[RMDB]
RNA sequence: GGGAACGACUCGAGUAGAGUCGAAAAGGUCUAGUAUCGGCGACUCAGAAUCUCUUGGGAGAGAUUCCUCCAGCUAACUUACUUAAUGGGUCCAUCUCUACAUUGGCAGGACCAUCUCAGGGUACUGCCUGCAUUGCGGGUUCGCCCGCAAUGCAGGAAAAGAAACAACAACAACAAC
Reactivity to 2A3 in 0.01 (KOAc 150mM, MgCl2 10mM, bicine 150mM(pH8.5), 24C), signal-to-noise 5, nucleotides 027 to 126: g060g000u070c040u070a030g010u090a090u120c040g030g000c000g110a130c030u010c140a040g020a020a030u000c010u010c010u070u190g070g160g060a100g000a010g000a020u030u010c010c010u040c010c000a000g060c020u030a060a080c040u060u160a020c030u090u180a140a060u220g070g030g050u060c040c010a140u050c060u010c020u070a110c020a130u060u120g070g000c060a060g010g010a000c020c000a030u030c080u020c030a050g120g000g030u100a060c050u020g000
Reactivity to DMS in 0.01 (KOAc 150mM, MgCl2 10mM, bicine 150mM(pH8.5), 24C), signal-to-noise 3, nucleotides 027 to 126: g020g000u000c040u010a070g000u000a070u030c100g030g010c070g020a060c070u030c220a050g010a030a020u000c000u000c010u030u030g010g000g030a070g000a010g000a090u000u000c000c050u000c000c040a070g000c090u040a040a110c130u010u020a020c040u010u020a030a090u010g000g020g030u010c080c300a140u000c020u010c020u020a110c250a070u040u000g010g000c000a020g010g010a100c030c000a020u000c080u040c110a160g000g000g000u010a040c000u000g000